[RMDB]
Source: RMDB library OK1LIB, as collected in RNAgym. This 177-nucleotide RNA was probed chemically with 2A3.
RNA sequence: GGGAACGACUCGAGUAGAGUCGAAAAUUUUUUUCUUCAUAUUUUACUGAAGUACACUAAAUCAUAUGCGCGAAAUAAGUGUACUAUUAGUACGUGCACAUGAUAAACAAUUUUUAUACUUAGUGUGCUCACUCCAGGCAUUCGUGCCUGGAGUGAGAAAAGAAACAACAACAACAAC
Reactivity to 2A3 in 0.01 (KOAc 150mM, MgCl2 10mM, bicine 150mM(pH8.5), 24C), signal-to-noise 1, nucleotides 027 to 126: u000u000u000u000u000u000u120c070u060u090c060a110u130a300u190u290u170u020a100c090u030g030a000a000g010u030a000c010a000c000u000a040a020a020u060c040a070u090a000u270g000c030g000c000g200a060a100a060u210a300a000g060u160g000u270a030c030u000a030u040u000a030g090u000a060c040g140u010g000c000a000c000a000u010g000a000u120a020a020a000c000a180a180u000u100u000u080u080a180u070a190c000u000u000a070g000u000g000u000g000
About this RNA: The reactions ran in a buffer of 150 mM KOAc, 10 mM MgCl2 and 150 mM bicine (pH 8.5), at 24 C.